Annotation: The record gives the reactivity of an RNA of 207 nucleotides to 2A3. For 2A3, 1,479 sequencing reads were counted. Source: RMDB library RNAMAK, as collected in RNAgym. Conditions: 150 mM KOAc, 10 mM MgCl2 and 150 mM bicine (pH 8.5), 24 C.

RNA sequence: GGGAACGACUCGAGUAGAGUCGAAAAUCCUAAGUCAGGUACUUUUGACGGCUGCGAUCAAACCAACAGCCAUGUCGGAAACGACAUGGACAUGGUUUGCAGAGCAGCCGAUAAGUACCUGAUAUGGAAAAGACUCCUGCCUUCGGGCAGGAGUCAAGGAUUUACGAAUGUUCGCAUUCGUAAAUCCAAAAGAAACAACAACAACAAC
Reactivity to 2A3 in 0.01 (KOAc 150mM, MgCl2 10mM, bicine 150mM(pH8.5), 24C), signal-to-noise 2, nucleotides 027 to 156: u030c010c010u050a170a010g010u000c000a010g010g000u000a000c010u000u170u220u200g270a150c030g000g000c000u030g000c030g050a060u040c010a000a010a000c010c000a010a090c040a120g010c010c000a000u000g000u000c000g020g090a080a080a110c030g000a000c000a000u000g000g000a020c000a060u010g010g020u000u020u000g020c040a000g010a000g020c000a000g010c000c000g010a000u000a010a000g000u000a000c000c000u000g000a000u000a000u010g030g020a000a140a020a080g010a000c000u030c010c000u000g010c020c000u040u030c220g050g030g030c010a000g020g000a010g000u000c000a000a000